[RMDB]
This 207-nucleotide RNA was probed chemically with 2A3.
RNA sequence: GGGAACGACUCGAGUAGAGUCGAAAAAAUUGUAGUUUACCAGACGAUUAUACAACGCGCCAACUGUAUCAAUGCCGUUUGCUUUCAUCGUCGCAAGCAAUUCUUUCAUCUGAACGACAUACAUUUGCUUGGCCGACGUAAAUAUUUUUAACUGAAAGCCUAGUAGGUGAUUCGUCACCUACUAGGCAAAAGAAACAACAACAACAAC
Reactivity to 2A3 in 0.01 (KOAc 150mM, MgCl2 10mM, bicine 150mM(pH8.5), 24C), signal-to-noise 1, nucleotides 027 to 156: a000a000u300u210g010u030a080g090u040u110u120a120c040c040a000g060a030c010g030a020u080u000a080u080a180c070a090a020c090g070c040g000c120c000a000a120c080u010g000u080a060u160c060a160a000u120g000c030c010g020u000u030u030g000c000u000u090u080c030a060u030c050g000u000c000g020c000a000a000g040c000a010a000u140u010c040u000u150u150c090a120u110c130u210g080a090a040c120g090a000c050a140u120a010c010a100u090u000u000g000c000u000u000g140g030c010c050g000a000c040g000u000a020a020a020u030a070u040u300u020u060u020a100a000c010u060g060a000a060a000
Source information:
The 2A3 profile rests on 393 reads. Source: RMDB library OK3TST, as collected in RNAgym.